[RMDB]
RNA sequence: GGGAACGACUCGAGUAGAGUCGAAAAGCCAUGAGUUUCGACUCAUGGCAAAAGCGCGUCAGCGCUACGAUGCAAGCGCAAGGGCGUCCAUCGUAAAUGACAAAAUUCUCGGGUUCGCCCGAGAAAACGGUUAACACCUAUUCGUAGGUGUUAACCGAAAAGAAACAACAACAACAAC
Reactivity to DMS in 0.01 (KOAc 150mM, MgCl2 10mM, bicine 150mM(pH8.5), 24C), signal-to-noise 2, nucleotides 027 to 126: g010c000c000a010u000g000a000g010u010u010u030c160g010a030c030u000c010a000u060g000g000c000a000a010a080a240g010c050g040c010g010u000c150a100g000c000g000c000u010a000c010g000a000u000g010c100a220a070g000c000g050c000a230a180g030g000g000c000g010u000c300c010a010u000c040g010u000a040a060a090u000g000a080c120a040a070a010a150u020u000c000u010c030g000g000g010u010u010c160g060c000c000c000g010a000g000a000a030a010a160
Reactivity to 2A3 in 0.01 (KOAc 150mM, MgCl2 10mM, bicine 150mM(pH8.5), 24C), signal-to-noise 3, nucleotides 027 to 126: g020c000c010a000u000g010a010g020u080u060u170c170g030a020c010u010c000a000u000g000g000c000a000a000a000a030g000c000g000c010g080u100c090a250g300c040g000c030u010a010c000g000a000u040g020c070a100a060g000c020g010c060a230a300g300g240g000c000g010u000c040c000a020u000c000g010u020a050a050a100u050g010a030c050a030a070a020a160u050u040c010u020c000g010g010g010u020u040c160g060c040c000c020g000a000g000a000a000a000a000

The data come from the RNA Mapping Database (RMDB), library M2PK50. The record gives the reactivity of an RNA of 177 nucleotides to DMS and 2A3. For DMS the reverse transcriptase was MarathonRT. The RNA was probed in 150 mM KOAc, 10 mM MgCl2 and 150 mM bicine (pH 8.5) at 24 C.